[RMDB]
RNA sequence: GGGAACGACUCGAGUAGAGUCGAAAAGAUAUGGAGCGUUGUAAAGAGGCAAACAUAUCGGAAACGAUAUGGUAGCUACCCACCUUUACACCGCUCCUAAGUCAAAACCGCUUCUUCGGAAGCGGAAGCUAUAUAGGAUGUUCGCAUCCUAUAUAGCAAAAGAAACAACAACAACAAC
Reactivity to DMS in 0.01 (KOAc 150mM, MgCl2 10mM, bicine 150mM(pH8.5), 24C), signal-to-noise 8, nucleotides 027 to 126: g000a030u000a300u010g000g010a010g010c000g010u000u000g010u000a000a010a010g010a140g010g010c010a020a130a300c000a010u010a010u000c000g020g000a100a090a230c010g010a010u010a000u000g010g010u010a250g000c010u000a040c060c040c130a300c100c000u010u000u000a000c000a000c020c000g000c000u000c000c000u000a000a050g000u000c020a090a040a070a080c010c000g000c000u000u000c000u000u010c190g020g000a010a010g010c000g010g000a010a020
Reactivity to 2A3 in 0.01 (KOAc 150mM, MgCl2 10mM, bicine 150mM(pH8.5), 24C), signal-to-noise 6, nucleotides 027 to 126: g020a010u050a040u120g000g000a010g000c000g000u010u000g000u010a000a010a010g040a050g090g000c010a100a300a010c000a020u010a000u010c000g000g020a090a080a010c010g000a000u000a000u020g040g040u070a010g000c000u050a060c070c050c010a100c010c000u000u000u000a000c000a000c010c010g000c000u000c000c000u000a020a000g020u010c020a000a010a070a170c010c000g000c010u010u000c010u030u060c300g180g000a000a010g000c000g000g000a010a010
Structure probing data (DMS and 2A3) for a 177-nucleotide construct. For 2A3 the reverse transcriptase was SuperScript II with manganese. Conditions: 150 mM KOAc, 10 mM MgCl2 and 150 mM bicine (pH 8.5), 24 C. The 2A3 profile rests on 43,223 reads.